[RMDB]
RNA sequence: GGGAACGACUCGAGUAGAGUCGAAAACUUGUAAGCAAGGAAUACAAUUAGUUUUACUCCCUUUUUGCUAAUUGUAAACUUCCUUAAAAUCCUAAACUCCCUUUUUUGGACCGACUUGAUUGUCGGUACAUGGAGUGAUGUUCGCAUCACUCCAUGUAAAAGAAACAACAACAACAAC
Reactivity to 2A3 in 0.01 (KOAc 150mM, MgCl2 10mM, bicine 150mM(pH8.5), 24C), signal-to-noise 3, nucleotides 027 to 126: c040u070u100g070u180a000a040g090c080a020a010g010g040a090a050u020a020c010a010a000u010u010a000g040u020u050u080u110a120c070u140c000c000c040u000u030u000u030u060g000c000u010a020a000u000u000g000u000a000a040a110c030u020u040c000c000u030u010a030a120a020a050u050c000c010u020a070a090a100c020u080c000c000c000u070u050u030u000u120u100g080g010a020c000c000g020a020c020u040u050g090a100u230u200g080u010c010g000g010u010
Reactivity to DMS in 0.01 (KOAc 150mM, MgCl2 10mM, bicine 150mM(pH8.5), 24C), signal-to-noise 3, nucleotides 027 to 126: c180u000u000g010u000a050a080g000c200a030a020g000g010a100a230u000a000c000a010a000u000u000a010g010u000u010u000u010a060c110u000c030c030c020u000u000u000u000u000g000c000u000a000a020u000u000g010u000a020a120a200c130u000u000c110c000u000u010a030a070a080a080u000c040c020u010a040a060a210c150u000c020c020c020u000u010u010u010u000u000g000g010a050c000c010g010a000c000u000u010g010a140u010u010g020u000c000g020g000u000